The record gives the reactivity of an RNA of 177 nucleotides to 2A3. The RNA was probed in 150 mM KOAc, 10 mM MgCl2 and 150 mM bicine (pH 8.5) at 24 C. Reactivities are given for positions 27 through 126. 2A3 is a SHAPE reagent: it acylates the 2'-hydroxyl of flexible nucleotides of all four kinds.

[RMDB]
RNA sequence: GGGAACGACUCGAGUAGAGUCGAAAAGCGAUGCCGUGCGCCGCGUCCGGCGGCGGUGGCGGGGAGCGCAGGUGCAGCGGCUUGCGCGCCGUUGCCGCCUCACUCUCUGCGCGGAAAGAGCGAGGCGGAGUAUCAGCGGCUUCGGCCGCUGAUACUCAAAAGAAACAACAACAACAAC
Reactivity to 2A3 in 0.01 (KOAc 150mM, MgCl2 10mM, bicine 150mM(pH8.5), 24C), signal-to-noise 1, nucleotides 027 to 126: g110c030g040a000u130g010c000c010g000u170g230c000g060c000c000g050c030g100u240c050c070g080g060c000g040g020c050g010g010u010g020g010c040g030g000g010g010a010g000c000g020c160a000g020g000u040g020c020a030g010c000g060g010c060u100u240g090c110g000c080g000c040c000g020u020u030g000c020c010g020c000c000u010c000a000c000u040c000u000c010u010g000c060g000c010g070g090a120a120a000g030a010g000c040g000a010g010g020c010g000